[RMDB]
RNA sequence: GGGAACGACUCGAGUAGAGUCGAAAACCAGGUAAGUCGCCGCACCGGUCACCACCGGAGCGGCUCGGGGUGAAGCCGUACCCGUCAGGGCACGGCCGGGCACCUCCCCGCCCGAACCCGACAGCUCAUGGUAGACUGAUUUCGAUCAGUCUACCAUAAAAGAAACAACAACAACAAC
Reactivity to 2A3 in 0.01 (KOAc 150mM, MgCl2 10mM, bicine 150mM(pH8.5), 24C), signal-to-noise 1, nucleotides 027 to 126: c000c000a010g020g170u120a060a060g040u080c070g030c010c000g030c000a060c010c000g040g040u110c080a060c170c000a000c010c000g000g000a000g000c000g000g000c000u000c020g010g000g000g000u020g060a050a000g000c000c000g020u030a050c010c000c010g080u140c200a210g000g010g000c020a000c000g000g000c000c000g000g000g010c000a070c040c010u070c000c000c010c020g000c010c000c010g020a010a010c000c010c000g010a020c030a050g000c010u050c110
Reactivity to DMS in 0.01 (KOAc 150mM, MgCl2 10mM, bicine 150mM(pH8.5), 24C), signal-to-noise 2, nucleotides 027 to 126: c000c040a170g010g010u060a070a080g000u010c100g000c010c000g010c010a060c010c000g010g020u020c080a150c300c300a300c010c000g000g000a030g010c010g050g020c000u000c050g000g000g000g000u000g000a070a140g000c030c000g010u000a060c010c010c000g000u050c270a070g000g000g000c020a000c030g010g010c020c000g020g000g000c000a210c130c090u020c040c000c000c200g020c000c010c000g020a100a020c010c020c000g000a210c030a090g000c030u060c150